[RMDB]
RNA sequence: GGGAACGACUCGAGUAGAGUCGAAAACAACUGUUAUCUUGCCACUGCAUUGUUAACACUCCAACAAAUAGAGUUGAAGUUUACUCCACCUGCUCUACAAAGGGCUGGUGAAGCUGCUAACUUUUGUCCUUUAACUAUUGUUCGCAAUAGUUAAAGGAAAAGAAACAACAACAACAAC
Reactivity to 2A3 in 0.01 (KOAc 150mM, MgCl2 10mM, bicine 150mM(pH8.5), 24C), signal-to-noise 3, nucleotides 027 to 126: c010a010a050c040u050g060u120u020a080u060c030u040u060g040c030c040a160c100u140g000c020a050u050u050g040u070u030a050a020c000a000c010u010c030c030a030a040c040a040a160a050u230a070g060a020g020u030u130g100a050a030g020u070u100u060a020c020u020c020c000a000c010c010u030g010c000u000c010u030a080c040a050a180a040g000g010g030c000u010g000g000u000g000a010a010g020c030u090g040c010u030a050a040c010u010u030u060u170g130u060
Reactivity to DMS in 0.01 (KOAc 150mM, MgCl2 10mM, bicine 150mM(pH8.5), 24C), signal-to-noise 3, nucleotides 027 to 126: c050a130a120c140u000g000u000u000a060u010c070u000u010g000c020c170a100c180u020g010c040a060u000u000g010u010u010a040a030c050a060c050u000c030c040a030a060c090a100a120a130u020a070g000a070g000u000u010g000a030a070g020u000u000u000a090c020u000c030c000a000c010c000u000g020c000u000c010u000a120c300a070a150a050g020g000g000c020u000g000g020u020g000a020a010g010c070u000g010c080u020a080a050c020u010u000u000u000g010u020